RNA sequence: GGGAACGACUCGAGUAGAGUCGAAAAGCUCGGUGACACCGCGUCUGCCUGGGUCCGAAAGAUUUCUUGUCGCAAAUCUACAAGACAUUGGUUAACGUGUGGGCCGCUUGAGCGGCCGCUCGGCGGGUCAUGCGAUGGUGUUCGCGCCGUUGCAUGAAAAAGAAACAACAACAACAAC
Reactivity to DMS in 0.01 (KOAc 150mM, MgCl2 10mM, bicine 150mM(pH8.5), 24C), signal-to-noise 9, nucleotides 027 to 126: g010c020u000c030g010g020u010g000a100c070a090c030c020g010c050g000u010c070u010g010c010c010u000g010g010g020u000c010c020g010a140a140a050g000a030u000u000u000c030u020u030g010u020c190g000c190a040a040a050u010c020u010a050c110a140a070g000a020c050a060u010u000g000g010u010u020a090a150c040g010u000g000u010g010g010g010c000c000g010c000u010u040g010a060g020c010g010g010c120c090g000c010u000c020g000g000c010g000g000g000
Reactivity to 2A3 in 0.01 (KOAc 150mM, MgCl2 10mM, bicine 150mM(pH8.5), 24C), signal-to-noise 9, nucleotides 027 to 126: g020c010u010c020g030g040u050g040a030c020a020c070c020g020c010g040u010c050u060g020c000c010u040g050g000g030u000c010c010g060a110a070a010g020a010u010u030u020c040u080u170g120u120c060g020c130a030a040a070u030c010u030a030c030a070a010g010a010c030a050u030u090g040g010u070u130a060a020c010g010u020g010u120g050g040g020c010c000g010c020u170u280g040a030g030c000g010g020c010c000g000c010u020c010g030g000c010g010g010g030
Chemical mapping of a 177-nucleotide RNA with DMS and 2A3. For DMS, 86,096 sequencing reads were counted. It was measured as part of the RMDB library OK1LIB. For DMS the reverse transcriptase was MarathonRT.